[RMDB]
Chemical mapping of a 177-nucleotide RNA with DMS and 2A3. It was measured as part of the RMDB library TTRDEL. The DMS profile rests on 3,600 reads. The RNA was probed in 150 mM KOAc, 10 mM MgCl2 and 150 mM bicine (pH 8.5) at 24 C.
RNA sequence: GGGAACGACUCGAGUAGAGUCGAAAAGAUAUGGACAGAACUACCUCGAAACACAGCGUUGAAAUCGGAAACGAUGGAGCUGUGUAGUAGAGGCUGUCCUAAGUCAAAAGAUCCCUUCGGGGAUCAAUCAUUUAGAUUCGUUCGCGAAUCUAAAUGAAAAAGAAACAACAACAACAAC
Reactivity to DMS in 0.01 (KOAc 150mM, MgCl2 10mM, bicine 150mM(pH8.5), 24C), signal-to-noise 4, nucleotides 027 to 126: g000a020u000a300u010g000g010a030c000a020g000a090a040c070u010a300c000c020u000c010g000a250a190a120c000a000c000a000g020c000g000u000u000g020a070a130a010u000c000g010g000a080a080a200c000g010a010u000g000g000a080g010c000u000g000u000g000u010a010g000u000a120g010a010g010g000c010u000g000u010c000c000u000a010a060g000u010c020a080a070a150a160g000a010u010c000c000c000u000u010c160g030g000g010g000a010u000c000a060a090
Reactivity to 2A3 in 0.01 (KOAc 150mM, MgCl2 10mM, bicine 150mM(pH8.5), 24C), signal-to-noise 2, nucleotides 027 to 126: g020a000u050a020u160g000g000a010c010a010g010a100a080c100u170a090c250c000u000c010g020a010a030a000c000a000c020a000g000c010g300u300u070g020a030a030a010u010c000g040g010a050a070a040c020g000a010u020g020g010a010g000c000u000g020u000g000u020a000g000u000a000g020a000g000g010c000u000g000u000c000c000u010a090a000g030u000c020a000a000a050a260g000a000u000c000c000c000u000u030c270g120g020g020g010a010u010c010a000a060